[RMDB]
RNA sequence: GGGAACGACUCGAGUAGAGUCGAAAAAGGAGCGUCUCAGUCGCAUGGCCGUCAGCGGUGAUGACUGCGUGGUGAAACCUUUGGACGACCGCUUCGCCACAUCACUACACUUCCUAAAUGCUAUGUCGAUCUAGACGGGGUUCGCCCCGUCUAGAUCAAAAGAAACAACAACAACAAC
Reactivity to DMS in 0.01 (KOAc 150mM, MgCl2 10mM, bicine 150mM(pH8.5), 24C), signal-to-noise 1, nucleotides 027 to 126: a090g000g020a170g000c070g000u000c010u000c090a080g010u000c030g040c100a100u000g000g020c050c070g010u000c050a060g020c110g010g030u000g000a030u000g020a080c100u000g000c170g030u010g010g000u000g010a050a100a140c080c020u000u000u020g010g020a070c080g000a060c060c040g020c070u030u000c030g000c000c060a010c040a080u010c050a020c030u000a120c050a150c150u000u000c000c000u000a090a070a060u010g010c110u020a050u000g010u000c100
Reactivity to 2A3 in 0.01 (KOAc 150mM, MgCl2 10mM, bicine 150mM(pH8.5), 24C), signal-to-noise 2, nucleotides 027 to 126: a020g240g050a110g000c020g070u000c030u040c080a080g050u060c040g000c140a050u050g120g000c050c030g150u150c070a000g130c030g100g060u030g050a190u140g060a040c100u080g000c030g040u030g000g000u090g000a000a090a090c000c000u070u080u040g110g000a030c030g030a040c010c040g080c060u060u040c050g010c010c000a030c010a010u000c010a000c130u140a000c040a030c090u080u050c010c000u070a140a100a030u110g080c040u090a060u200g080u090c090
Structure probing data (DMS and 2A3) for a 177-nucleotide construct. The 2A3 profile rests on 993 reads. For DMS the reverse transcriptase was MarathonRT. The DMS profile rests on 873 reads. The data come from the RNA Mapping Database (RMDB), library OK2TRN. The RNA was probed in 150 mM KOAc, 10 mM MgCl2 and 150 mM bicine (pH 8.5) at 24 C.